[RMDB]
RNA sequence: GGGAACGACUCGAGUAGAGUCGAAAAGGGACGCCUUUAGAAGAAGAGGCUAGGUGGUAUUCCGGUGUGGGAUACUUGGUAAUAUGUAACGCUAAUUGCAUCAGAUUGUAGGACGGAAUUUACAGUCAAAACGGUCCUGCGUUCGCGCAGGACCGAAUCUAUACCGUGGCUUCGGCCACGGUAUAGAAAAAGAAACAACAACAACAAC
Reactivity to 2A3 in 0.01 (KOAc 150mM, MgCl2 10mM, bicine 150mM(pH8.5), 24C), signal-to-noise 1, nucleotides 027 to 156: g020g000g040a070c050g040c010c050u110u040u050a170g030a170a000g010a100a000g010a040g030g010c000u000a020g000g070u090g010g010u040a020u010u200c050c060g060g060u200g000u120g060g030g030a020u030a030c020u020u050g020g000u070a050a050u060a070u110g000u030a020a000c040g010c070u040a050a070u040u020g010c000a000u030c030a090g020a070u020u030g030u070a030g000g050a000c050g080g020a020a030u130u030u100a070c040a010g000u010c000a010a000a040a220c030g000g000u020c000c000u000g000c010g000u030u120c170g000c000g000c040a000g000g000a000c000c000g000a000a000